[RMDB]
RNA sequence: GGGAACGACUCGAGUAGAGUCGAAAAACGGUGGCCGGUAGCAAUGGCUUGUGGUUCGUUUAGAGACUGCUUGCUUAUAACACUUGGCCAGAACGAAAAUCUAUCUAAUAUCCGUAGCGUCAUAAUGCAAGUGAUCAAUGUUCGCAUUGAUCACUUGAAAAGAAACAACAACAACAAC
Reactivity to DMS in 0.01 (KOAc 150mM, MgCl2 10mM, bicine 150mM(pH8.5), 24C), signal-to-noise 3, nucleotides 027 to 126: a090c040g010g020u000g000g030c010c010g030g010u000a060g030c170a100a170u010g010g000c000u000u010g010u000g010g010u010u000c030g020u010u010u010a150g010a180g000a020c000u000g020c010u000u000g020c020u000u000a060u010a190a170c140a010c030u000u010g070g010c000c010a040g030a070a080c090g010a080a050a070a100u010c070u000a100u010c070u010a040a060u000a100u000c040c030g020u020a080g000c110g000u000c090a080u000a080a100u010g030
Reactivity to 2A3 in 0.01 (KOAc 150mM, MgCl2 10mM, bicine 150mM(pH8.5), 24C), signal-to-noise 4, nucleotides 027 to 126: a000c020g030g000u020g010g000c020c010g010g020u020a020g050c090a080a100u060g010g000c000u010u000g000u010g000g000u030u050c040g020u080u130u270a130g050a010g040a050c000u000g000c000u010u010g010c000u110u150a030u040a160a040c050a000c040u230u300g000g000c000c000a000g040a060a000c010g060a050a030a030a100u040c050u080a050u050c050u040a090a090u030a120u120c030c020g040u030a020g010c010g090u060c040a090u050a240a060u150g060